[RMDB]
RNA sequence: GGGAACGACUCGAGUAGAGUCGAAAAGGUUAGGUUCGUCAGCAGGACUUAGCGGUAGUUUCCAAUUGGGCACACACCGCCUUAUGAGGAGAACCUUGUUACUUGUGGCGACUUACUGCGCGGAAGCCUUCCGGUCUAUGUUCGCAUAGACCGGAAGAAAAGAAACAACAACAACAAC
Reactivity to DMS in 0.01 (KOAc 150mM, MgCl2 10mM, bicine 150mM(pH8.5), 24C), signal-to-noise 3, nucleotides 027 to 126: g000g020u010u000a000g020g010u000u000c020g030u020c050a160g010c050a070g000g020a160c050u000u000a100g010c060g000g020u040a080g010u010u000u000c010c000a170a130u010u010g010g000g000c110a090c120a120c200a120c150c060g000c000c080u000u000a030u000g000a300g000g000a100g000a040a060c010c010u000u040g020u010u010a080c140u000u000g010u020g000g040c010g000a040c020u000u000a080c040u000g000c060g000c060g000g000a080a200g030c060
Reactivity to 2A3 in 0.01 (KOAc 150mM, MgCl2 10mM, bicine 150mM(pH8.5), 24C), signal-to-noise 4, nucleotides 027 to 126: g050g050u110u070a010g010g050u110u050c030g020u010c030a030g030c000a010g040g030a030c030u090u090a030g080c040g030g030u090a120g070u010u060u020c000c000a010a060u080u060g020g010g010c010a050c030a020c020a060c070c090g000c000c000u140u180a060u050g070a030g060g030a030g000a040a030c000c000u020u070g060u040u100a110c040u060u050g030u010g100g030c000g000a010c000u010u020a020c020u080g050c050g010c050g070g060a060a050g050c000

Annotation: The record gives the reactivity of an RNA of 177 nucleotides to DMS and 2A3. For DMS the reverse transcriptase was MarathonRT. The data come from the RNA Mapping Database (RMDB), library OK1LIB. For 2A3 the reverse transcriptase was SuperScript II with manganese. In probing experiments dimethyl sulfate is read out at A N1 and C N3, which are open when not base-paired. For 2A3, 2,375 sequencing reads were counted.